[RMDB]
RNA sequence: GGGAACGACUCGAGUAGAGUCGAAAAAUCGAACCAUACAGGAAGGCCUUCAGGAAAGCGGUGCCCUUCUUCCGCAGGGCGGACGUGGCCGCCUAUCUCGUGCGGAACAUCCUUUCCGACUCUGCGCCAAGCUCACUCGUUUCGACGAGUGAGCUUGAAAAGAAACAACAACAACAAC
Reactivity to 2A3 in 0.01 (KOAc 150mM, MgCl2 10mM, bicine 150mM(pH8.5), 24C), signal-to-noise 1, nucleotides 027 to 126: a000u070c010g030a000a060c000c000a090u130a210c060a080g080g110a110a020g080g000c020c050u090u110c120a080g250g000a100a040a040g070c150g060g050u060g030c040c000c000u070u090c010u100u040c040c010g000c010a040g000g030g030c020g000g050a050c080g010u120g050g050c030c030g000c020c000u110a160u110c130u020c030g180u220g030c010g000g000a000a030c000a010u030c010c000u040u040u000c000c030g060a130c100u010c020u030g000c030g000c000
Reactivity to DMS in 0.01 (KOAc 150mM, MgCl2 10mM, bicine 150mM(pH8.5), 24C), signal-to-noise 1, nucleotides 027 to 126: a080u000c170g010a100a100c020c020a060u000a150c090a090g010g000a060a100g000g030c010c020u000u000c060a130g010g000a030a020a030g000c200g030g010u000g020c060c010c030u030u030c080u000u020c050c010g020c040a170g020g000g010c000g000g000a050c150g030u000g010g010c000c060g040c000c010u010a030u000c070u020c170g000u010g010c000g000g000a040a080c040a080u010c000c040u000u000u000c000c000g020a090c180u000c030u000g000c060g010c130